[RMDB]
RNA sequence: GGGAACGACUCGAGUAGAGUCGAAAAGAUAUGGAAGGAGCCGAUAAGAUGCCAUCGGAAACGAUGGGCAUCUUUUGACGGCUCUUCCUAAGUCAAAUCCGACCUCAUGUUCGCAUGAGGUCGGAAACUAAGGUCUAGGGUUCGCCCUAGACCUUAGAAAAGAAACAACAACAACAAC
Reactivity to DMS in 0.01 (KOAc 150mM, MgCl2 10mM, bicine 150mM(pH8.5), 24C), signal-to-noise 2, nucleotides 027 to 126: g000a060u000a260u000g000g020a020a020g010g030a010g010c000c000g060a100u000a020a000g000a010u000g010c000c010a020u000c000g010g000a070a060a160c010g010a010u000g020g010g010c000a000u000c000u000u000u000u000g000a170c070g010g010c000u000c010u000u000c000c000u010a020a100g000u000c030a070a130a170u000c000c000g030a020c000c010u000c010a000u000g000u010u000c150g020c020a010u000g010a000g000g000u000c000g000g010a000a000a070
Reactivity to 2A3 in 0.01 (KOAc 150mM, MgCl2 10mM, bicine 150mM(pH8.5), 24C), signal-to-noise 1, nucleotides 027 to 126: g010a020u040a020u100g000g040a000a140g200g110a030g030c060c000g030a080u100a300a030g010a000u010g000c000c000a000u010c000g040g000a060a030a010c020g000a010u050g030g060g030c000a000u000c000u010u020u010u020g020a010c000g010g000c000u000c000u010u000c000c000u000a030a000g030u020c020a000a020a220u000c000c000g020a020c000c000u000c000a020u000g060u110u120c300g030c170a010u030g000a020g050g020u000c000g000g020a000a000a000
The data come from the RNA Mapping Database (RMDB), library TTRDEL. Chemical mapping of a 177-nucleotide RNA with DMS and 2A3. For 2A3 the reverse transcriptase was SuperScript II with manganese. The RNA was probed in 150 mM KOAc, 10 mM MgCl2 and 150 mM bicine (pH 8.5) at 24 C. The 2A3 profile rests on 2,122 reads.